[RMDB]
RNA sequence: GGGAACGACUCGAGUAGAGUCGAAAACACCCCGCGUUCGCGCGGGGUGAAACAGGUAGUUGCUAUCUCAAUUACGUGAACAGGCCAUGGUCUGGAUAGCAAAAACUGAUGACUUCGGUCAUCAGAAUCAUAGAAGUUAGUUCGCUAACUUCUAUGAAAAAGAAACAACAACAACAAC
Reactivity to DMS in 0.01 (KOAc 150mM, MgCl2 10mM, bicine 150mM(pH8.5), 24C), signal-to-noise 7, nucleotides 027 to 126: c020a010c000c000c000c000g020c000g030u000u010c210g020c000g050c010g010g020g010g020u000g000a010a050a060c130a100g020g020u010a060g020u000u000g000c020u000a010u000c020u010c100a080a090u000u010a090c150g010u010g000a110a190c060a040g020g000c030c030a070u010g050g020u000c090u000g010g000a030u000a050g000c020a030a040a040a090a140c010u000g000a010u000g000a010c000u000u010c160g030g010u000c000a000u000c000a000g000a080a090
Reactivity to 2A3 in 0.01 (KOAc 150mM, MgCl2 10mM, bicine 150mM(pH8.5), 24C), signal-to-noise 6, nucleotides 027 to 126: c010a000c020c020c000c010g000c010g010u030u050c240g000c000g000c000g090g020g010g000u010g000a020a010a000c040a020g110g200u200a070g090u100u040g000c010u020a010u020c030u000c130a100a300u270u180a100c130g070u080g080a110a020c010a040g050g000c030c030a120u200g060g000u020c030u020g030g000a010u010a000g000c000a010a030a010a010a010c010u010g000a000u000g000a000c000u020u030c240g070g000u000c000a000u000c000a010g000a010a050
The record gives the reactivity of an RNA of 177 nucleotides to DMS and 2A3. Values cover nucleotides 27 to 126. The 2A3 profile rests on 10,939 reads. For DMS, 12,257 sequencing reads were counted. 2A3 adducts were read by reverse transcription with SuperScript II with manganese.